[RMDB]
RNA sequence: GGGAACGACUCGAGUAGAGUCGAAAAGCACGAGUGUGGGUAGACUCCGUGUGAGAGCUCAGUUAGUGCAAACUGAGCUCGAUCUAGUUUACUCACACUGGAUCCACAGUUUGCACUAACUGUGCGAGCACAGCUAUGUAUUCGUACAUAGCUGUGCAAAAGAAACAACAACAACAAC
Reactivity to DMS in 0.01 (KOAc 150mM, MgCl2 10mM, bicine 150mM(pH8.5), 24C), signal-to-noise 9, nucleotides 027 to 126: g010c050a060c040g000a030g010u000g020u000g010g000g020u000a030g000a030c000u010c300c190g010u010g020u000g000a300g000a060g010c000u000c000a010g010u000u000a030g000u000g000c070a020a020a010c000u000g000a030g010c060u000c050g000a060u000c020u000a030g000u000u000u010a030c050u000c040a020c060a010c000u000g010g000a080u000c010c040a150c050a020g000u000u000u000g000c050a020c040u000a020a020c020u000g010u000g000c050g010a130
Reactivity to 2A3 in 0.01 (KOAc 150mM, MgCl2 10mM, bicine 150mM(pH8.5), 24C), signal-to-noise 9, nucleotides 027 to 126: g070c030a010c100g060a040g010u020g000u040g030g060g020u020a020g020a030c010u040c110c140g160u120g010u020g110a100g000a000g020c000u010c030a000g010u010u030a080g040u070g160c060a040a000a000c000u010g010a010g040c030u020c010g000a000u000c000u000a010g000u000u030u040a060c030u030c010a000c000a000c000u000g000g020a020u010c010c010a030c000a020g010u010u040u070g070c080a050c070u040a030a010c010u040g010u010g040c050g060a010

Conditions: 150 mM KOAc, 10 mM MgCl2 and 150 mM bicine (pH 8.5), 24 C. This 177-nucleotide RNA was probed chemically with DMS and 2A3. DMS adducts were read by reverse transcription with MarathonRT. 2A3 adducts were read by reverse transcription with SuperScript II with manganese. For 2A3, 44,191 sequencing reads were counted. It was measured as part of the RMDB library OK2TRN. Reactivities are given for positions 27 through 126.